Structure probing data (2A3) for a 207-nucleotide construct.
[RMDB]
RNA sequence: GGGAACGACUCGAGUAGAGUCGAAAACCUCACUACAUUUUACUGUUCCUAAAGAAUUUGUGACAGGUACAGUAAAACGUAUUGCAAGGUUUAUCAGUUCCUAUAAACAGGUAAAUAACCAUAUAUGAAAAGCAAAGACUGUUCGCAGUCUUUGCAAUCUCAAAUAUCCGUUCGCGGAUAUUUGAGAAAAAGAAACAACAACAACAAC
Reactivity to 2A3 in 0.01 (KOAc 150mM, MgCl2 10mM, bicine 150mM(pH8.5), 24C), signal-to-noise 2, nucleotides 027 to 156: c000c000u000c000a010c020u010a000c020a050u030u010u000u000a000c000u000g010u040u020c030c000u160a200a160a060g120a240a280u250u240u250g120u130g050a060c100a060g010g000u000a010c000a000g000u000a000a010a000a000c010g000u000a000u000u030g000c090a100a040g000g000u000u030u030a150u070c020a010g000u020u000c010c000u000a020u110a090a110a020c110a020g060g000u030a100a290a080u110a180a120c050c000a020u060a000u020a040u180g100a050a030a040a030g000c010a000a000a000g000a000c000u010g030u040u080c090g000c050a000g010u000c000u000u000u000g000c000a000a000
About this RNA: For 2A3 the reverse transcriptase was SuperScript II with manganese.